[RMDB]
RNA sequence: GGGAACGACUCGAGUAGAGUCGAAAAAUGAGAAACGGAGUCAGUUCCUCCGUUAAUACGGUGAAUGAAGUUCAAGGUGGUACUUUUUCGAAAGUGGAUGUCUACAGAUUGAAACCGUAUGACAACCCCUAAUGCGUCGAUUCGUCGACGCAUUAGGAAAAGAAACAACAACAACAAC
Reactivity to 2A3 in 0.01 (KOAc 150mM, MgCl2 10mM, bicine 150mM(pH8.5), 24C), signal-to-noise 3, nucleotides 027 to 126: a000u300g020a040g100a040a100a010c080g020g000a010g040u100c140a020g050u120u040c000c010u010c000c010g010u000u000a020a020u040a040c000g000g020u000g030a030a070u050g010a110a040g090u110u070c150a050a020g010g040u060g000g010u020a000c010u000u110u030u010u120c250g070a040a000a000g020u050g030g040a140u070g000u010c000u010a030c030a030g020a070u040u020g000a020a030a040c000c010g000u000a000u020g000a010c040a030a100c000c000
Reactivity to DMS in 0.01 (KOAc 150mM, MgCl2 10mM, bicine 150mM(pH8.5), 24C), signal-to-noise 3, nucleotides 027 to 126: a120u040g020a170g040a070a160a100c040g010g000a030g000u000c040a150g030u030u020c090c010u000c130c060g030u000u000a080a020u000a000c000g030g020u000g000a190a020u000g000a270a040g000u000u000c150a170a030g000g010u000g000g000u010a020c020u000u010u040u030u000c090g000a020a020a010g020u040g000g000a070u010g000u000c010u000a030c030a060g010a160u000u000g000a130a130a020c010c000g010u000a000u000g000a060c180a120a070c110c090
Overview: An RNA of 177 nucleotides, treated with 2A3 and DMS and read out base by base. The RNA was probed in 150 mM KOAc, 10 mM MgCl2 and 150 mM bicine (pH 8.5) at 24 C. For 2A3, 2,410 sequencing reads were counted.